[RMDB]
RNA sequence: GGGAACGACUCGAGUAGAGUCGAAAAGAAAGAUCGGAAAAGAUACGGUGCUUGAGGCCGUAUCAACCUCAAGCUACCUCAGGACGAUCUACCCUGGGGAAGUAGGUCGAAAACGAUCGAAAAGAAAGGGUAAUCGUAUGUUCGCAUACGAUUACCCAAAAGAAACAACAACAACAAC
Reactivity to 2A3 in 0.01 (KOAc 150mM, MgCl2 10mM, bicine 150mM(pH8.5), 24C), signal-to-noise 2, nucleotides 027 to 126: g060a000a030a010g000a000u020c030g020g020a080a020a040a050g030a100u080a110c060g000g020u080g030c120u090u110g040a060g040g040c000c010g080u120a090u070c010a000a010c000c000u000c020a020a000g040c060u110a050c000c020u000c000a010g060g030a000c040g030a030u020c010u040a030c000c000c000u030g010g000g020g000a080a000g020u030a010g010g060u020c040g000a040a060a020a080c000g010a010u030c020g020a000a060a000a010g060a020a080a010
Reactivity to DMS in 0.01 (KOAc 150mM, MgCl2 10mM, bicine 150mM(pH8.5), 24C), signal-to-noise 1, nucleotides 027 to 126: g080a090a140a170g020a000u010c000g020g000a010a000a220a170g000a090u040a130c130g020g000u000g000c000u000u060g000a210g000g060c000c050g040u000a030u020c150a080a060c000c070u000c190a090a060g090c000u010a070c000c000u000c120a040g000g040a300c110g000a040u000c150u020a120c000c000c040u000g000g000g000g000a040a230g000u000a040g000g010u030c000g000a150a040a100a160c000g040a000u000c000g040a100a090a090a000g000a040a030a180